[RMDB]
RNA sequence: GGGAACGACUCGAGUAGAGUCGAAAAAGUCAGGAGUUUGAGACCAGCCUGGCUAACACGGUGAAACCCCGUCUCUACUAAAUACAAAAAAUUAGCCGGGCAUGAUGGCACAUGCCUAUAAUCCUAGCAUCCUAUCCAUUUUCGAAUGGAUAGGAUGAAAAGAAACAACAACAACAAC
Reactivity to 2A3 in 0.01 (KOAc 150mM, MgCl2 10mM, bicine 150mM(pH8.5), 24C), signal-to-noise 3, nucleotides 027 to 126: a020g050u040c020a000g000g050a050g090u060u130u160g090a040g040a040c010c000a000g010c000c010u000g000g000c000u020a030a010c070a000c040g020g050u030g030a030a030a030c030c010c000c010g050u020c010u040c010u030a110c030u050a050a120a110u190a050c070a030a110a020a050a060a110u080u060a040g030c050c020g030g000g000c020a020u030g030a020u050g060g000c040a020c000a060u080g000c000c010u080a100u060a050a040u000c000c010u000a030g050
Reactivity to DMS in 0.01 (KOAc 150mM, MgCl2 10mM, bicine 150mM(pH8.5), 24C), signal-to-noise 4, nucleotides 027 to 126: a060g010u000c050a030g000g010a090g010u000u000u000g010a070g010a140c040c030a070g010c000c000u000g010g000c000u000a020a040c060a040c070g010g020u010g000a050a040a080c050c020c010c040g000u000c060u000c030u000a040c070u000a020a050a040u000a060c090a010a040a030a040a050a050u000u000a040g010c080c060g000g010g010c010a020u000g000a060u010g000g010c090a180c050a020u000g000c010c010u000a050u010a070a080u010c010c020u000a070g010